[RMDB]
RNA sequence: GGGAACGACUCGAGUAGAGUCGAAAACAUCUUUGCAUUGUUGCGUUUAACGGCGAUAUGUGCCAUAUAUUCUUGCACUUGAUGAGCCUCAAUAACAAUAACGCGUUCAUCAUCACUGACGAUCUCGCGAACUUCCUUGCAUGCCGGGCAAUAGAACCUAAACCAGAGUGUUCGCACUCUGGUUUAGAAAAGAAACAACAACAACAAC
Reactivity to DMS in 0.01 (KOAc 150mM, MgCl2 10mM, bicine 150mM(pH8.5), 24C), signal-to-noise 3, nucleotides 027 to 156: c070a190u010c060u000u010u010g020c120a190u000u000g010u010u000g010c010g010u010u000u000a080a080c110g010g020c000g020a150u000a090u000g040u000g020c010c060a080u000a080u010a070u000u010c080u000u000g020c050a070c020u010u010g010a070u000g010a110g020c030c020u010c110a080a100u000a100a120c090a060a170u000a090a120c110g020c120g010u010u010c010a040u000c010a040u010c070a140c130u000g040a110c030g020a100u000c030u000c020g030c020g020a010a080c050u000u000c030c030u000u010g010c030a070u000g010c020c010g030g020g000c010a030a110u000a040g000a070a150c120
Reactivity to 2A3 in 0.01 (KOAc 150mM, MgCl2 10mM, bicine 150mM(pH8.5), 24C), signal-to-noise 4, nucleotides 027 to 156: c040a060u040c030u040u100u170g000c030a060u030u080g040u080u110g010c020g070u060u060u080a160a020c050g000g020c020g060a050u050a060u230g100u100g010c010c030a030u060a000u020a010u200u090c080u040u080g040c030a010c060u040u080g070a020u020g020a050g010c010c000u030c050a110a190u210a140a050c080a070a110u130a100a050c070g030c050g050u060u020c020a040u010c000a020u060c030a040c130u070g040a040c000g020a030u030c010u040c050g040c000g010a040a020c050u030u030c020c000u010u050g020c010a020u070g030c050c000g000g010g000c030a020a020u110a130g070a060a030c040

Chemical mapping of a 207-nucleotide RNA with DMS and 2A3. The RNA was probed in 150 mM KOAc, 10 mM MgCl2 and 150 mM bicine (pH 8.5) at 24 C. The 2A3 profile rests on 2,280 reads. The data come from the RNA Mapping Database (RMDB), library OK3TST. DMS adducts were read by reverse transcription with MarathonRT.